[RMDB]
RNA sequence: GGGAACGACUCGAGUAGAGUCGAAAACGGUGUAUCCCGCUGCCAUCAAGUUCGUGCAACCCAGGGUGGAGGGCGCUGAGCGCCGCCGCGUCAGCGUGGCCGUGCAGCAGGUGGGCAGCGGCAAGGCCAGCAUCACAGCCUUCGGGCUGUGAUGCUGAAAAGAAACAACAACAACAAC
Reactivity to 2A3 in 0.01 (KOAc 150mM, MgCl2 10mM, bicine 150mM(pH8.5), 24C), signal-to-noise 1, nucleotides 027 to 126: c040g010g030u160g000u100a050u070c000c110c020g000c050u010g010c040c010a030u060c080a080a080g060u080u070c090g030u140g140c030a070a090c030c050c070a120g030g030g070u170g020g150a160g090g000g000c020g000c070u160g030a010g110c000g000c020c090g030c000c010g040c000g130u090c060a060g090c020g030u040g070g000c030c070g000u010g000c010a050g030c020a000g020g030u040g020g190g000c010a000g000c050g000g000c010a030a000g100g000c010
Reactivity to DMS in 0.01 (KOAc 150mM, MgCl2 10mM, bicine 150mM(pH8.5), 24C), signal-to-noise 1, nucleotides 027 to 126: c130g000g000u000g000u000a100u030c250c000c000g020c000u010g000c060c000a040u010c040a190a150g010u000u000c100g050u010g010c050a070a080c050c010c080a130g020g010g010u000g000g000a110g000g000g020c040g010c040u000g000a200g000c020g020c000c060g010c030c070g050c000g010u000c130a060g040c160g040u000g000g000c000c010g000u000g000c000a050g000c130a180g000g000u020g000g010g010c000a060g020c010g000g030c090a040a050g000g000c090
The data come from the RNA Mapping Database (RMDB), library OK2TRN. Chemical mapping of a 177-nucleotide RNA with 2A3 and DMS. The 2A3 profile rests on 965 reads. 2A3 adducts were read by reverse transcription with SuperScript II with manganese. The reactions ran in a buffer of 150 mM KOAc, 10 mM MgCl2 and 150 mM bicine (pH 8.5), at 24 C.